[RMDB]
RNA sequence: GGGAACGACUCGAGUAGAGUCGAAAAGUGUCCGCACUAAGUUCGGCAUCAAUAUGGUGACCUCCCGGGAGCGGGGGACCACCAGGUUGCCUAAGGAGGGGUGAACCGGCCCAGGUCGGAAACGGAGCAGGUCAAAACUCCCGUGCUGAUCAGUAGUCUCAAGUAGACAGUUCGCUGUCUACUUGAGAAAAGAAACAACAACAACAAC
Reactivity to 2A3 in 0.01 (KOAc 150mM, MgCl2 10mM, bicine 150mM(pH8.5), 24C), signal-to-noise 1, nucleotides 027 to 156: g120u090g040u010c040c010g040c040a000c000u140a060a090g110u090u130c060g000g000c010a020u010c050a020a160u130a080u250g010g000u010g060a130c000c010u050c000c000c000g020g010g080a120g160c080g010g000g000g010g010a080c130c000a000c000c000a000g040g020u020u020g030c000c010u010a000a050g030g000a040g000g000g030g000u070g060a040a010c000c040g050g050c010c030c030a030g020g080u030c030g000g000a160a030a000c020g000g010a120g110c080a010g080g030u200c000a040a070a130a140c010u010c000c000c000g010u010g040c050u020g010a040u050c020a030g110u130a010g050u010

The record gives the reactivity of an RNA of 207 nucleotides to 2A3. It was measured as part of the RMDB library ARCHII. Values cover nucleotides 27 to 156.